[RMDB]
RNA sequence: GGGAACGACUCGAGUAGAGUCGAAAAAAAUGAUUUAAGUUCGUAAUCGUUUGCGCUUUUAAUAUAUUGAUUACAUUUUGUUCAGCUAUAACAUCUAAAUUUGAAGUUAUCUCAUCACAUAUUAAAACUACGAUACUUUGUUCGCAAAGUAUCGUAGAAAAGAAACAACAACAACAAC
Reactivity to 2A3 in 0.01 (KOAc 150mM, MgCl2 10mM, bicine 150mM(pH8.5), 24C), signal-to-noise 2, nucleotides 027 to 126: a000a000a050u070g000a060u130u030u060a100a020g030u020u050c010g030u070a020a020u000c020g020u030u080u120g100c070g060c030u100u110u010u090a160a040u160a030u040a020u100u090g010a030u100u090a050c030a050u130u170u100u000g060u010u040c030a000g030c020u040a010u020a150a070c010a010u040c040u120a150a190a230u170u120u050g020a030a000g000u020u000a020u040c010u010c020a070u120c010a010c030a010u100a050u090u280a070a100a070a070
Reactivity to DMS in 0.01 (KOAc 150mM, MgCl2 10mM, bicine 150mM(pH8.5), 24C), signal-to-noise 2, nucleotides 027 to 126: a020a040a040u020g010a080u020u000u000a100a060g020u000u000c090g000u010a040a030u010c040g030u010u010u000g010c130g020c080u020u000u000u010a070a080u010a020u000a110u000u010g030a030u010u010a040c050a060u000u000u010u000g010u000u010c180a090g030c110u000a040u000a010a050c020a050u010c040u000a080a080a140u010u000u010g000a080a070g000u010u010a040u010c050u000c080a020u000c110a080c160a080u010a050u010u000a020a030a020a090